[RMDB]
RNA sequence: GGGAACGACUCGAGUAGAGUCGAAAAUAGAGUUGGUGCGAUGCAUGGAAGUUAAUGACGAGUGCGAGUAGUUAGCUAUGAGUAUGAGUUGUUGAUGGAAGUGGGCGUAACUAAUGGCAUGAGCAUACUAUACCAAUUGCUUCGGCAAUUGGUAUAGAAAAGAAACAACAACAACAAC
Reactivity to DMS in 0.01 (KOAc 150mM, MgCl2 10mM, bicine 150mM(pH8.5), 24C), signal-to-noise 3, nucleotides 027 to 126: u000a130g010a100g000u000u010g020g010u000g000c040g020a060u010g010c030a020u000g000g010a300a140g000u000u000a020a030u000g010a040c040g000a300g010u000g000c010g000a270g010u000a020g020u010u010a120g020c030u000a000u000g010a300g010u000a020u000g000a260g000u000u000g040u000u010g000a030u010g010g000a190a100g010u000g000g020g000c040g000u010a030a060c060u000a040a060u000g000g020c100a110u000g000a100g010c060a100u010a090
Reactivity to 2A3 in 0.01 (KOAc 150mM, MgCl2 10mM, bicine 150mM(pH8.5), 24C), signal-to-noise 2, nucleotides 027 to 126: u120a010g110a020g050u060u050g000g000u040g000c030g020a040u120g030c020a020u030g010g010a030a030g030u010u030a040a000u040g050a020c010g000a010g010u000g000c020g000a030g010u020a000g000u020u180a060g090c010u000a000u010g020a000g010u030a040u070g030a030g030u010u020g030u020u020g030a030u010g010g000a030a020g000u010g020g110g020c020g010u000a070a040c040u040a030a040u060g040g040c060a050u090g050a040g020c020a020u060a070